[RMDB]
RNA sequence: GGGAACGACUCGAGUAGAGUCGAAAACGGAUCUGGAUUCACCCCGAUCAUCGAAAAAAGGGUUACGGAACCGCGGCAUUGCGCAAGUCGCGCUCGGAGAUGGCCUGGGCGUUCCCGGCCGUGCCGAGUAACUGCGGAGAUUCGUCUCCGCAGUUACAAAAGAAACAACAACAACAAC
Reactivity to DMS in 0.01 (KOAc 150mM, MgCl2 10mM, bicine 150mM(pH8.5), 24C), signal-to-noise 2, nucleotides 027 to 126: c050g010g000a040u000c020u020g010g010a170u010u010c180a110c070c010c010c070g010a150u000c060a140u010c150g000a000a040a030a070a100a120g010g000g020u000u000a150c080g010g000a040a080c060c020g020c030g000g000c060a050u010u000g010c080g000c030a040a030g020u000c090g000c080g020c010u000c010g000g000a150g010a050u000g010g000c000c000u000g010g010g020c180g000u000u000c010c000c010g000g020c000c000g030u000g000c000c020g010a130
Reactivity to 2A3 in 0.01 (KOAc 150mM, MgCl2 10mM, bicine 150mM(pH8.5), 24C), signal-to-noise 2, nucleotides 027 to 126: c030g000g010a040u020c010u110g040g050a150u170u180c090a060c020c010c050c000g050a060u030c010a020u110c060g190a090a020a020a060a060a190g070g000g000u080u060a060c050g050g010a070a040c030c020g010c000g030g030c050a060u120u290g070c100g000c070a070a040g070u110c020g000c030g020c010u020c020g020g020a160g020a050u050g060g030c000c050u040g020g010g000c060g100u130u180c000c010c090g000g070c040c000g020u010g030c020c000g020a000
Source: RMDB library OK2TRN, as collected in RNAgym. Chemical mapping of a 177-nucleotide RNA with DMS and 2A3. The reactions ran in a buffer of 150 mM KOAc, 10 mM MgCl2 and 150 mM bicine (pH 8.5), at 24 C.